RNA sequence: GGGAACGACUCGAGUAGAGUCGAAAAGCGCGUGAGGGCGGUGACGAUUCUUUCUUGUAAAACAAAAUGAGGUCGUUGGGGGCGUGUCCAGGCUCACCGUCGUUUUGUUUAAGAACGGUUUGUGCGCCGAGGCAAUAAGUUUCGACUUAUUGCCUCGAAAAGAAACAACAACAACAAC
Reactivity to DMS in 0.01 (KOAc 150mM, MgCl2 10mM, bicine 150mM(pH8.5), 24C), signal-to-noise 2, nucleotides 027 to 126: g010c030g030c060g020u010g000a090g000g020g020c040g000g020u000g010a090c020g010a050u000u010c030u000u000u000c070u000u000g000u020a100a060a060a250c040a020a020a030a070u010g010a050g010g010u000c060g010u000u000g010g010g000g010g010c010g020u000g010u000c040c040a060g020g000c010u000c030a020c010c120g000u000c010g010u000u000u000u000g000u000u000u020a090a050g000a030a040c050g010g000u000u000u000g010u000g030c090g010c050